[RMDB]
RNA sequence: GGGAACGACUCGAGUAGAGUCGAAAAGAUAUGGAAACCUUUUCGCGAUAAGCUGUAGUCGGAAACGACUAAACAGCUUUUGACGCGGAAAGGUUUCCUAAGUCAAACUAAGAGUUCGCUCUUAGAAGUUAUCGAAAACGUUCGCGUUUUCGAUAACAAAAGAAACAACAACAACAAC
Reactivity to DMS in 0.01 (KOAc 150mM, MgCl2 10mM, bicine 150mM(pH8.5), 24C), signal-to-noise 1, nucleotides 027 to 126: g010a020u010a300u000g020g010a000a000a000c010c000u000u000u000u000c000g030c030g070a240u000a040a010g010c000u000g020u000a050g040u000c010g020g010a090a020a210c010g020a020c000u000a030a080a140c030a010g010c000u000u000u030u000g000a180c120g000c020g000g000a000a010a010g010g020u010u010u000c000c000u030a010a020g010u010c040a170a110a260c000u010a020a000g030a020g000u020u010c300g020c010u000c010u000u000a030g000a120a190
The record gives the reactivity of an RNA of 177 nucleotides to DMS. The DMS profile rests on 1,125 reads. It was measured as part of the RMDB library TTRDES.